[RMDB]
RNA sequence: GGGAACGACUCGAGUAGAGUCGAAAAGAUAUGGAGUCACUGCUCCUCCAACAGCCGUAAUCGGAAACGAUUACGGACAUGGAGUGAGUUGACUCCUAAGUCAAACUACUUCGUUCGCGAAGUAGAAUCACGAUACCUCGUUCGCGAGGUAUCGUGAAAAAGAAACAACAACAACAAC
Reactivity to 2A3 in 0.01 (KOAc 150mM, MgCl2 10mM, bicine 150mM(pH8.5), 24C), signal-to-noise 1, nucleotides 027 to 126: g050a000u090a040u260g010g020a030g020u020c040a000c200u300g010c020u050c010c000u000c000c030a120a050c070a140g140c000c000g010u010a000a010u000c020g010g000a060a050a100c020g000a000u000u000a000c000g000g000a000c000a090u040g000g000a000g030u300g040a000g120u000u080g030a030c000u050c030c030u000a030a000g010u010c020a040a060a170c010u020a000c000u000u000c010g140u020u160c300g040c000g050a030a000g020u000a000g030a060a080
Reactivity to DMS in 0.01 (KOAc 150mM, MgCl2 10mM, bicine 150mM(pH8.5), 24C), signal-to-noise 1, nucleotides 027 to 126: g000a030u000a300u010g000g000a000g000u000c010a040c300u010g010c000u000c030c030u000c020c000a020a100c300a150g000c030c000g010u020a010a010u000c020g020g000a020a100a160c000g010a000u000u000a020c020g000g000a000c080a090u030g020g010a030g000u000g010a000g020u000u000g000a020c080u000c000c010u010a010a060g030u000c050a090a100a120c000u000a030c000u000u000c000g040u000u100c230g000c000g050a000a000g000u000a000g030a100a300